This 177-nucleotide RNA was probed chemically with 2A3 and DMS. Conditions: 150 mM KOAc, 10 mM MgCl2 and 150 mM bicine (pH 8.5), 24 C. High 2A3 reactivity points to a flexible backbone, as in loops and unpaired stretches. Source: RMDB library OK1LIB, as collected in RNAgym. 2A3 adducts were read by reverse transcription with SuperScript II with manganese.

RNA sequence: GGGAACGACUCGAGUAGAGUCGAAAACGCGGCGACGACCGACAUCCGGGCUCAACGCCUGGCGACCCUGGAAUCCGUUGCCGAUAUGGAAACGUUGCCCGUCGACGACGAUGCCGCCCGAAUGUGGUCGUACUCGAUCCUUCGGGAUCGAGUACGAAAAAGAAACAACAACAACAAC
Reactivity to 2A3 in 0.01 (KOAc 150mM, MgCl2 10mM, bicine 150mM(pH8.5), 24C), signal-to-noise 2, nucleotides 027 to 126: c090g020c010g010g000c010g020a040c010g050a050c060c090g040a040c060a060u020c030c020g020g000g030c000u070c130a070a040c070g000c000c000u010g020g000c000g070a180c010c000c040u060g070g070a040a010u040c130c050g000u030u040g050c000c030g020a000u010a130u300g100g000a030a030a070c060g050u020u050g000c030c000c060g000u000c010g030a100c000g000a000c020g030a050u090g020c030c040g000c000c000c020g060a040a020u110g000u040g100g030
Reactivity to DMS in 0.01 (KOAc 150mM, MgCl2 10mM, bicine 150mM(pH8.5), 24C), signal-to-noise 1, nucleotides 027 to 126: c100g050c070g060g000c000g030a000c000g030a000c030c090g000a100c170a140u000c050c000g000g050g030c020u020c210a040a010c060g000c000c000u000g020g010c080g020a120c070c240c020u000g030g000a050a110u030c190c000g070u070u030g000c030c000g000a090u000a010u060g010g000a000a000a130c200g000u010u000g000c160c020c050g010u000c020g080a100c000g020a070c060g000a110u000g010c000c180g010c010c010c000g090a000a010u030g000u000g000g000